[RMDB]
RNA sequence: GGGAACGACUCGAGUAGAGUCGAAAAAGUCUACAUUGUCGUUGUAUGAGUAUGAUCUUUUAAACCCGCUAGACAAGUAUCCGUUUGAUAUUGUAGGAUGUGGACAUUUAACAAUCUGACACGUGGGUGGAUCGGACCAUUCUCCUCCUGAACACAGUACUCUUACAUCGUUCGCGAUGUAAGAGUAAAAAGAAACAACAACAACAAC
Reactivity to 2A3 in 0.01 (KOAc 150mM, MgCl2 10mM, bicine 150mM(pH8.5), 24C), signal-to-noise 2, nucleotides 027 to 156: a000g120u000c010u040a030c000a080u060u060g080u050c040g060u000u100g050u070a150u030g020a000g020u030a080u070g030a040u040c000u040u040u010u180a000a040a000c030c010c000g000c040u010a000g010a090c040a140a000g060u010a030u000c090c030g120u070u070u220g040a050u040a060u130u100g030u050a020g010g040a040u160g140u080g150g040a020c110a120u170u160u130a090a050c030a000a040u010c010u030g030a040c040a000c170g000u110g000g010g000u010g010g000a000u100c040g000g030a020c020c020a110u060u030c000u010c010c010u020c000c100u040g110a150a000c080a000c040a040g100
Reactivity to DMS in 0.01 (KOAc 150mM, MgCl2 10mM, bicine 150mM(pH8.5), 24C), signal-to-noise 2, nucleotides 027 to 156: a100g010u010c000u000a080c080a110u000u000g030u000c010g000u000u010g000u000a070u000g010a100g040u000a080u000g010a050u000c020u000u030u000u030a050a170a120c000c030c010g040c050u010a190g010a080c100a090a130g010u010a020u000c010c090g000u000u000u000g010a090u000a070u000u010g030u000a130g040g010a060u000g020u000g010g000a110c080a140u010u010u000a080a080c070a080a090u000c030u000g010a140c050a050c180g030u000g030g040g020u010g000g000a080u000c120g030g000a060c010c040a050u010u000c010u000c010c130u000c030c000u000g000a050a080c140a080c120a110g010